Structure probing data (2A3) for a 207-nucleotide construct. Values cover nucleotides 27 to 156. It was measured as part of the RMDB library OK3TST.
RNA sequence: GGGAACGACUCGAGUAGAGUCGAAAACCGACCUGGUUCACUAAUUUGUGGAUUCUUGUCGUGGCUAGCAUUUUUGGUAUAAAGGGUACACAAAUAUUCCGUAACGGGAAAAAGUAAUGUCUAAACCUGAAUAUCAGGAUAUUAUAAGCGAAUACAACAUAGGUGGCUGAUUCGUCAGCCACCUAUGAAAAGAAACAACAACAACAAC
Reactivity to 2A3 in 0.01 (KOAc 150mM, MgCl2 10mM, bicine 150mM(pH8.5), 24C), signal-to-noise 1, nucleotides 027 to 156: c000c000g010a000c040c040u040g010g000u020u010c020a000c010u140a220a140u200u140u190g000u020g010g000a000u300u240c010u000u110g020u020c080g040u020g050g100c050u010a020g010c010a020u090u090u000u130u000g010g000u020a000u040a020a210a050g000g000g000u170a040c010a000c010a000a160a070u080a050u090u090c030c020g070u060a080a060c110g030g000g100a010a070a000a000a000g090u080a000a050u060g010u010c110u210a000a040a190c000c000u000g000a010a000u010a020u070c000a000g000g010a020u000a060u080u080a050u110a060a000g000c010g000a040a000u090a070c060a200a000
The reactions ran in a buffer of 150 mM KOAc, 10 mM MgCl2 and 150 mM bicine (pH 8.5), at 24 C.